[RMDB]
RNA sequence: GGGAACGACUCGAGUAGAGUCGAAAAAGAUCCACGCUACGGCGUGGAUCACACGUUCAUCCCUAUUGGGACGGAAGUAGGCAUAGUGCCGAAGGAACGCAUUAGUCAAGCGCUACGGCGCAUGACACACAUCAGAGUCACUUCGGUGACUCUGAAAGUAUAGACAGAAGUUCGCUUCUGUCUAUACAAAAGAAACAACAACAACAAC
Reactivity to DMS in 0.01 (KOAc 150mM, MgCl2 10mM, bicine 150mM(pH8.5), 24C), signal-to-noise 2, nucleotides 027 to 156: a070g000a030u000c000c000a030c010g020c000u000a120c300g110g010c010g080u000g010g020a000u000c010a030c070a020c030g010u000u000c010a280u000c000c000c010u000a190u000u010g020g010g010a050c050g010g000a050a080g020u000a110g020g010c020a210u000a140g030u000g010c000c030g020a130a110g010g000a130a030c050g020c030a170u010u000a090g010u010c020a040a100g000c010g010c000u000a100c150g030g000c000g010c010a030u010g000a040c020a090c060a030c090a090u000c000a020g000a060g000u000c010a000c000u000u000c290g020g000u020g000a010c010u010c010u010g000a000a010a110
Reactivity to 2A3 in 0.01 (KOAc 150mM, MgCl2 10mM, bicine 150mM(pH8.5), 24C), signal-to-noise 7, nucleotides 027 to 156: a000g010a000u000c000c010a010c000g020c000u030a030c240g160g000c000g000u000g000g000a000u000c000a000c000a000c000g010u010u010c010a020u040c020c010c000u110a300u150u300g000g000g000a000c010g020g000a040a030g010u020a020g010g010c040a050u100a250g140u160g170c000c010g000a010a000g030g010a020a000c010g000c040a060u060u140a030g010u010c010a060a110g000c000g000c020u050a060c260g090g000c000g000c010a010u020g000a000c010a000c010a010c000a140u030c000a000g000a000g000u000c000a000c010u040u090c160g100g000u000g000a000c000u000c000u000g000a000a000a000